[RMDB]
RNA sequence: GGGAACGACUCGAGUAGAGUCGAAAAGAACUUAUACAUAUAUGCAAGUAAAUGAGAUAUUAUCUAUCAUAACGAAUCAAGGGAUAUUUGUAUAUAUCAGGAGUUUCUGAAAGAAAGAUAUGAAGAGUAUCAUAGUAGUAUCCAUCAAUCACAAUGCUGAAUCUUCGGUAUUCGUACCGAAGAUUCAAAAAGAAACAACAACAACAAC
Reactivity to 2A3 in 0.01 (KOAc 150mM, MgCl2 10mM, bicine 150mM(pH8.5), 24C), signal-to-noise 2, nucleotides 027 to 156: g000a000a000c020u100u150a070u060a250c040a010u110a000u000a010u170g000c000a010a000g030u070a060a190a190u100g020a080g010a070u060a080u230u060a030u060c030u070a080u030c010a080u090a110a080c060g030a120a060u160c000a010a050g070g060g040a040u060a010u040u060u000g030u030a020u000a000u010a010u120c060a040g170g020a020g000u070u110u000c030u020g090a010a030a000g030a020a080a010g000a010u020a030u030g040a030a060g060a010g150u010a020u020c040a010u010a040g010u000a000g000u000a020u000c010c010a020u000c020a000a100u140c040a000c030a110a110u070g050c060
Reactivity to DMS in 0.01 (KOAc 150mM, MgCl2 10mM, bicine 150mM(pH8.5), 24C), signal-to-noise 1, nucleotides 027 to 156: g030a110a050c010u000u000a120u000a130c300a050u000a010u010a080u030g010c020a030a110g000u000a070a160a160u000g000a230g010a160u000a050u010u020a000u010c030u030a120u000c110a150u000a050a070c030g010a160a240u000c080a060a090g000g030g000a160u000a000u000u000u000g010u000a060u000a030u040a030u000c000a130g000g000a090g000u010u000u000c000u010g000a080a050a110g000a090a150a150g000a030u000a020u000g010a080a170g000a130g040u000a040u000c070a030u000a090g040u000a190g000u000a030u000c010c020a270u000c040a080a130u000c080a040c090a080a070u000g010c140
An RNA of 207 nucleotides, treated with 2A3 and DMS and read out base by base. The DMS profile rests on 1,261 reads. Values cover nucleotides 27 to 156. The reactions ran in a buffer of 150 mM KOAc, 10 mM MgCl2 and 150 mM bicine (pH 8.5), at 24 C. 2A3 adducts were read by reverse transcription with SuperScript II with manganese.